[RMDB]
Source information: An RNA of 177 nucleotides, treated with 2A3 and DMS and read out base by base. Values are in units of 0.01, from 0 to 300, in steps of 10. Values cover nucleotides 27 to 126. The DMS profile rests on 1,773 reads. In probing experiments dimethyl sulfate is read out at A N1 and C N3, which are open when not base-paired. The reactions ran in a buffer of 150 mM KOAc, 10 mM MgCl2 and 150 mM bicine (pH 8.5), at 24 C.
RNA sequence: GGGAACGACUCGAGUAGAGUCGAAAACACAUGCCAUCAUAUCGGUUAAGAACUCUUAACUCUGAUGGCUUUCGAGUUAUGUGGUGCAUUGAAGCUCUCCCUUCAAUUCAACCUACCGUUCCGUCAACUUUACGUCCCUGUUCGCAGGGACGUAAAGAAAAGAAACAACAACAACAAC
Reactivity to 2A3 in 0.01 (KOAc 150mM, MgCl2 10mM, bicine 150mM(pH8.5), 24C), signal-to-noise 2, nucleotides 027 to 126: c060a000c020a050u130g000c030c000a000u000c010a000u100a080u250c080g060g000u020u000a000a030g060a300a230c090u050c000u290u000a000a000c000u000c010u070g030a000u020g010g000c000u020u020u000c020g000a010g010u060u080a130u190g100u040g020g000u010g000c020a020u010u000g000a020a000g020c010u040c000u060c070c010c030u000u000c010a010a010u000u000c040a110a150c000c010u040a020c000c030g010u000u000c000c010g120u130c100a130a090
Reactivity to DMS in 0.01 (KOAc 150mM, MgCl2 10mM, bicine 150mM(pH8.5), 24C), signal-to-noise 3, nucleotides 027 to 126: c140a100c150a130u000g000c010c000a000u000c000a040u020a120u020c260g000g000u000u000a020a000g000a240a150c300u020c000u000u000a000a010c010u010c090u000g000a020u000g010g000c010u000u000u000c010g000a050g010u010u030a110u010g000u000g010g010u010g000c170a020u000u020g000a030a020g000c180u000c140u000c130c140c000u000u000c000a010a010u010u000c060a070a050c000c000u000a030c180c030g010u000u000c000c000g020u000c050a080a140